[RMDB]
RNA sequence: GGGAACGACUCGAGUAGAGUCGAAAAUGGUAGUCCGCCACUCUAAGGGGACGCCUUUAGAAGAAGAGGCUAGGUGGUAUUCCGGUGUGGGAUACUUGGUAAUAUGUAACGCUAAUUGUAUAAGAUUAAAACUUUGCAUACUUCGGUAUGCAAAGAACAAAAUGGAAUACUUCGGUAUUCCAUUUUGAAAAGAAACAACAACAACAAC
Reactivity to 2A3 in 0.01 (KOAc 150mM, MgCl2 10mM, bicine 150mM(pH8.5), 24C), signal-to-noise 4, nucleotides 027 to 156: u140g030g000u040a110g020u000c010c020g100c090c000a060c060u120c050u110a100a130g040g020g000g000a020c030g020c000c000u110u090u040a160g010a170a010g030a020a010g010a020g040g000c070u070a040g100g000u030g030g000u080a050u020u060c030c040g030g040u120g040u090g060g000g000a020u030a040c010u010u060g020g020u060a050a060u030a070u180g060u050a060a010c030g010c070u040a070a100u090u030g020u040a110u050a180a100g030a040u080u230a010a080a040a050c000u040u000u000g000c010a000u000a000c000u000u030c100g080g010u000a000u000g000c010a020a000a000g000a020a000
Reactivity to DMS in 0.01 (KOAc 150mM, MgCl2 10mM, bicine 150mM(pH8.5), 24C), signal-to-noise 2, nucleotides 027 to 156: u010g010g000u000a060g070u000c000c030g010c030c030a200c090u000c050u010a090a050g010g000g030g020a110c120g020c000c000u000u000u010a070g000a090a100g020a140a110g010a160g010g000c030u000a040g010g010u000g020g010u000a070u000u000c020c000g000g050u020g020u010g010g010g010a060u000a020c030u000u040g020g030u000a070a130u000a070u010g020u000a070a090c070g010c040u020a070a090u010u000g020u000a120u000a080a130g000a200u000u000a050a070a130a100c000u010u000u010g010c000a030u000a030c000u000u000c300g040g020u010a000u000g020c000a000a000a010g000a070a130

This 207-nucleotide RNA was probed chemically with 2A3 and DMS. The reactions ran in a buffer of 150 mM KOAc, 10 mM MgCl2 and 150 mM bicine (pH 8.5), at 24 C. For DMS, 5,025 sequencing reads were counted.